[RMDB]
RNA sequence: GGGAACGACUCGAGUAGAGUCGAAAAACGGAAAACCCUUUGGUGCGCUAUGCCAUCAACAACGCCCUCAAACUCAAUAAAGCCUCUUUGAUCGCUAUGCACCCUAUCAAAGAUAACGCGUUAGCGAAACUCAUCGUUCGUUCGCGAACGAUGAGUUAAAAGAAACAACAACAACAAC
Reactivity to DMS in 0.01 (KOAc 150mM, MgCl2 10mM, bicine 150mM(pH8.5), 24C), signal-to-noise 1, nucleotides 027 to 126: a070c080g050g040a040a090a100a170c080c010c010u000u000u000g010g000u020g010c060g020c080u030a040u000g000c040c010a100u000c080a000a040c180a080a070c110g000c000c010c000u040c070a050a080a130c130u010c040a040a140u000a030a150a120g020c110c060u000c040u000u000u000g000a060u000c030g010c040u000a010u000g000c080a100c060c020c010u020a030u010c110a040a130a040g000a080u010a040a150c160g000c010g010u000u000a050g000c030g000a060